[RMDB]
RNA sequence: GGGAACGACUCGAGUAGAGUCGAAAAGCGGUUUGGCAAGCCGUGCAAGGGGGCUGCGGAUAACGGGGAUCAGGUGGCGGUCAAACAAGGUGAACUCCUCGGUCAAAAACGGGAUUCGGUGAGCUGAAUCCCGAGACAGUUUCGACUGUCUCGGGAUAAAAGAAACAACAACAACAAC
Reactivity to DMS in 0.01 (KOAc 150mM, MgCl2 10mM, bicine 150mM(pH8.5), 24C), signal-to-noise 4, nucleotides 027 to 126: g020c030g020g000u000u000u000g020g000c020a190a220g020c020c030g030u000g020c150a090a090g000g010g000g000g010c070u000g010c090g010g010a070u020a060a120c120g000g000g000g010a100u010c080a060g010g020u000g010g010c040g010g000u000c090a040a080a070c140a060a070g000g000u000g000a080a070c110u000c040c010u000c040g010g000u010c060a050a040a050a070a060c070g000g000g020a080u000u000c060g000g010u000g000a090g000c040u030g000a090
Reactivity to 2A3 in 0.01 (KOAc 150mM, MgCl2 10mM, bicine 150mM(pH8.5), 24C), signal-to-noise 1, nucleotides 027 to 126: g030c010g010g000u040u070u100g060g000c050a010a010g000c020c010g050u060g080c060a100a130g000g030g010g010g000c040u090g020c010g020g010a020u040a090a040c050g010g000g020g000a030u050c020a040g100g000u050g000g000c030g000g050u030c010a000a040a080c030a040a070g030g020u090g020a030a020c020u070c000c010u030c010g040g000u070c050a010a000a020a050a050c020g020g000g000a010u030u110c070g050g000u050g010a010g000c000u020g020a040
The record gives the reactivity of an RNA of 177 nucleotides to DMS and 2A3. For 2A3 the reverse transcriptase was SuperScript II with manganese. The data come from the RNA Mapping Database (RMDB), library OK2TST.